[RMDB]
RNA sequence: GGGAACGACUCGAGUAGAGUCGAAAAAUGCUGUAAUUCGUUACAGCAUAAUGAACUCAGAAGUGAAACGCCGUAGGGCCGAUGGUAGUGUGGGGUCUCCCCGAAGGUCACUUUUCGAAGUGACCAAGAGUCUAUGUAUGUUCGCAUACAUAGACUCAAAAGAAACAACAACAACAAC
Reactivity to 2A3 in 0.01 (KOAc 150mM, MgCl2 10mM, bicine 150mM(pH8.5), 24C), signal-to-noise 7, nucleotides 027 to 126: a000u010g000c000u000g000u020a020a030u060u080c170g040u060u010a000c000a000g000c000a000u000a000a050u020g010a020a010c010u000c030a070g030a230a030g150u100g100a060a100a050c050g020c030c020g040u090a080g020g040g030c020c020g030a040u080g040g050u060a080g030u040g020u080g050g020g000g030u010c040u040c020c000c000c010g050a120a040g010g000u000c000a000c000u030u030u030u070c160g080a010a000g000u000g000a000c000c000a000a020
Reactivity to DMS in 0.01 (KOAc 150mM, MgCl2 10mM, bicine 150mM(pH8.5), 24C), signal-to-noise 8, nucleotides 027 to 126: a020u000g000c000u000g010u000a000a030u000u010c190g020u000u000a010c000a000g010c000a010u000a030a070u010g000a090a080c030u000c010a090g000a110a110g010u000g000a070a090a110c160g010c020c010g010u000a060g010g010g010c020c040g000a060u000g000g000u000a050g020u000g010u000g010g010g000g010u000c030u000c040c000c010c120g020a070a080g010g000u000c000a010c000u000u000u000u010c180g010a010a010g020u000g000a010c000c000a030a040
Description
The record gives the reactivity of an RNA of 177 nucleotides to 2A3 and DMS. DMS (dimethyl sulfate) methylates the pairing face of unpaired adenines and cytosines. DMS adducts were read by reverse transcription with MarathonRT. Values cover nucleotides 27 to 126. The DMS profile rests on 18,823 reads. The reactions ran in a buffer of 150 mM KOAc, 10 mM MgCl2 and 150 mM bicine (pH 8.5), at 24 C. It was measured as part of the RMDB library M2PK50.